Description
An RNA of 177 nucleotides, treated with DMS and 2A3 and read out base by base. For DMS, 118,579 sequencing reads were counted. The reactions ran in a buffer of 150 mM KOAc, 10 mM MgCl2 and 150 mM bicine (pH 8.5), at 24 C.

RNA sequence: GGGAACGACUCGAGUAGAGUCGAAAAAGUGUAGCAUCUAGGACGGGCCACGAGCCUGGAGGUGUAUGGGGUUCGUGCCAGGGCUGCAGAGGUUUUCCUGUCCGCGAUGCAGGGUCAACUCUGUGAGGCGGCGGGCUUCGUUCGCGAGGUUUGCCGCAAAAGAAACAACAACAACAAC
Reactivity to DMS in 0.01 (KOAc 150mM, MgCl2 10mM, bicine 150mM(pH8.5), 24C), signal-to-noise 9, nucleotides 027 to 126: a070g020u020g010u020a080g010c010a020u010c010u010a200g010g000a030c020g010g000g000c160c020a050c030g010a070g000c000c000u000g000g020a090g010g010u010g010u020a070u020g010g010g010g010u010u010c040g010u010g010c050c030a120g010g000g010c020u010g000c030a060g000a080g010g000u020u010u020u010c010c000u010g010u010c020c020g000c140g000a020u010g010c000a100g000g000g000u010c090a070a120c040u000c020u000g010u010g000a120g010
Reactivity to 2A3 in 0.01 (KOAc 150mM, MgCl2 10mM, bicine 150mM(pH8.5), 24C), signal-to-noise 9, nucleotides 027 to 126: a000g140u110g030u080a030g010c020a060u030c020u050a050g010g030a020c020g010g010g000c030c010a040c030g010a010g010c010c010u070g090g060a160g050g060u120g030u080a190u170g050g010g010g020u050u090c030g020u060g070c000c010a020g010g030g000c010u060g000c030a030g030a060g060g020u060u040u100u100c000c010u020g030u040c020c020g030c050g040a040u090g000c000a000g010g000g020u060c030a050a080c050u020c020u040g060u050g080a060g150